Structure probing data (DMS and 2A3) for a 177-nucleotide construct.
For 2A3 the reverse transcriptase was SuperScript II with manganese.

RNA sequence: GGGAACGACUCGAGUAGAGUCGAAAAUAUCCGGCUGGCGCAAGCCAGCAUCCUGAGAGGGAUGGUAAAGGCAAAAGAAAUAAACGGUCUCCGGUAAAGCAUGAUUCCGAAGGGAUGACGUUUCCGGCGGAUUGGAAGUAUUCGUACUUCCAAUCCGAAAAGAAACAACAACAACAAC
Reactivity to DMS in 0.01 (KOAc 150mM, MgCl2 10mM, bicine 150mM(pH8.5), 24C), signal-to-noise 3, nucleotides 027 to 126: u060a070u020c010c030g050g000c010u010g010g000c000g000c250a080a140g000c000c010a000g000c010a020u000c020c000u000g000a150g030a080g010g020g010a000u010g020g020u020a030a100a090g000g010c110a080a030a090a070g010a100a090a100u040a040a100a080c130g000g000u000c020u000c030c000g000g020u020a040a050a080g000c070a060u030g000a160u000u000c000c020g020a150a110g010g000g000a090u020g020a190c100g000u000u000u020c010c020g000g000
Reactivity to 2A3 in 0.01 (KOAc 150mM, MgCl2 10mM, bicine 150mM(pH8.5), 24C), signal-to-noise 3, nucleotides 027 to 126: u160a020u020c010c000g030g000c000u010g000g020c020g000c080a060a020g010c000c010a000g000c000a000u000c000c000u060g010a070g010a010g040g030g010a020u050g010g050u190a100a090a030g080g010c050a040a030a040a010g160a060a110a080u180a050a110a030c060g040g020u020c040u010c030c020g000g030u060a010a030a000g030c040a040u180g010a010u070u020c000c020g030a110a020g160g000g010a020u030g020a020c060g010u000u000u080c000c020g000g020